[RMDB]
RNA sequence: GGGAACGACUCGAGUAGAGUCGAAAAGUUUCUACUGGACUCCGAAGCGCAUGCCAAGAUUGUAGUAAUUCUUGUAAAACAUACUACAAAAAAAAUAGUUGCAAAUAACGACAACUACGCUUUAGCAGCUUAAUGCUAACCGAUGCAAGAAUUGACUGAGUAGUUGAAUGUUCGCAUUCAACUACUCAAAAGAAACAACAACAACAAC
Reactivity to 2A3 in 0.01 (KOAc 150mM, MgCl2 10mM, bicine 150mM(pH8.5), 24C), signal-to-noise 1, nucleotides 027 to 156: g000u000u020u010c020u020a070c090u070g000g000a000c020u030c080c010g040a040a050g040c010g000c060a040u090g000c020c010a010a040g050a040u000u080g010u040a000g020u030a020a100u070u060c020u060u080g050u090a090a090a100a000c050a070u130a020c000u050a030c000a140a020a040a010a000a000a000a000u050a020g000u000u000g000c000a020a080a210u100a160a020c020g090a040c010a000a000c020u040a020c090g020c000u000u090u050a020g000c030a010g000c000u090u150a080a010u050g010c000u020a020a000c020c010g000a020u050g050c020a010a010g020a130a140u110u030g020a090c050u040
The data come from the RNA Mapping Database (RMDB), library ARCHII. Chemical mapping of a 207-nucleotide RNA with 2A3. 2A3 adducts were read by reverse transcription with SuperScript II with manganese. High 2A3 reactivity points to a flexible backbone, as in loops and unpaired stretches. The reactions ran in a buffer of 150 mM KOAc, 10 mM MgCl2 and 150 mM bicine (pH 8.5), at 24 C. Reactivities are given for positions 27 through 156.